[RMDB]
RNA sequence: GGGAACGACUCGAGUAGAGUCGAAAACAUGAGGUUUCUGCCAUCUAACAAACAGUGCCAGCCAAGCAAAGCGGGCAUGCAGGCCUGCAAGUGGUUCUCAUGGAAGCUGUUCCUCCCCACAGUUUGGGACACUGACCAACAGUCCUUUAGCAGGAGGACACUGAUGUCCAUUCGUGGACAUCAGUGUAAAAGAAACAACAACAACAAC
Reactivity to 2A3 in 0.01 (KOAc 150mM, MgCl2 10mM, bicine 150mM(pH8.5), 24C), signal-to-noise 3, nucleotides 027 to 156: c030a020u060g010a010g040g030u050u140u140c050u060g030c020c000a130u140c050u160a100a060c070a190a050a000c030a060g020u040g110c010c010a000g030c010c040a120a030g030c060a050a100a020g010c040g030g020g000c020a020u200g050c060a020g070g050c000c000u010g000c020a040a090g020u020g020g000u110u050c030u000c020a050u020g060g030a090a020g060c040u020g020u080u040c000c000u020c010c010c050c000a060c010a020g020u050u070u050g030g000g010a000c000a000c080u060g030a080c010c010a050a050c000a050g050u020c010c000u040u050u050a050g020c010a000g000g060a010g020g000
Reactivity to DMS in 0.01 (KOAc 150mM, MgCl2 10mM, bicine 150mM(pH8.5), 24C), signal-to-noise 2, nucleotides 027 to 156: c020a090u000g000a120g020g020u000u000u010c100u010g010c020c010a100u000c060u010a140a140c040a140a060a070c050a290g020u000g010c010c020a070g010c010c000a060a170g040c230a070a120a140g000c070g020g030g010c000a080u000g010c160a210g010g020c030c000u000g060c050a060a110g000u000g010g000u000u000c030u010c020a000u000g010g030a080a100g030c000u000g000u000u000c020c000u000c000c020c010c080a090c050a130g010u000u010u000g020g010g000a060c010a140c060u000g040a050c060c020a020a100c020a050g010u010c010c000u010u000u000a110g040c070a060g010g000a040g010g000